[RMDB]
Chemical mapping of a 207-nucleotide RNA with DMS and 2A3. For 2A3 the reverse transcriptase was SuperScript II with manganese. The RNA was probed in 150 mM KOAc, 10 mM MgCl2 and 150 mM bicine (pH 8.5) at 24 C. For DMS the reverse transcriptase was MarathonRT. 2A3 is a SHAPE reagent: it acylates the 2'-hydroxyl of flexible nucleotides of all four kinds. Reactivities are given for positions 27 through 156.
RNA sequence: GGGAACGACUCGAGUAGAGUCGAAAAUGAUACUGGCCCUGCAGUUGGCAGGAACGUGUUUAUAGGUUUGGCAGAGCAUCGCUACGGAGAUGUUGAGGUGCCUACCGUAGUUCAUCAGCGAAACUAGCGUUUUGGAGCGAAGCUGCAGGUCACCGACUGGACCGAUUAUUUUCGAAUAAUCGGUCCAAAAAGAAACAACAACAACAAC
Reactivity to DMS in 0.01 (KOAc 150mM, MgCl2 10mM, bicine 150mM(pH8.5), 24C), signal-to-noise 1, nucleotides 027 to 156: u000g000a210u000a090c070u000g030g010c100c000c000u000g010c000a060g040u020u000g020g070c000a150g030g040a020a030c000g040u000g000u000u000u000a160u000a060g010g050u000u010u020g020g000c000a060g050a300g000c020a090u000c020g000c000u000a180c190g000g040a120g000a070u000g020u000u010g000a100g040g040u000g020c020c030u000a040c010c020g000u000a080g020u000u000c070a080u020c070a050g040c030g000a110a030a070c010u000a080g010c040g030u010u000u000u010g000g040a190g000c060g000a080a170g010c030u000g000c060a020g000g010u000c030a090c000c000g010a200c210
Reactivity to 2A3 in 0.01 (KOAc 150mM, MgCl2 10mM, bicine 150mM(pH8.5), 24C), signal-to-noise 2, nucleotides 027 to 156: u100g030a020u110a150c090u080g000g000c000c010c100u010g010c010a020g040u180u300g160g030c010a010g000g000a000a000c000g000u050g080u010u230u030a250u100a090g000g000u100u110u010g050g010c030a020g000a000g080c040a010u040c040g040c070u090a050c070g010g030a130g000a030u080g040u160u130g150a180g000g120u100g000c000c010u060a100c040c000g000u000a010g040u120u040c040a110u000c010a080g040c020g100a030a000a030c000u030a070g030c010g000u000u000u060u010g140g110a270g010c040g040a120a000g020c000u000g030c010a000g000g030u020c020a000c020c020g060a060c080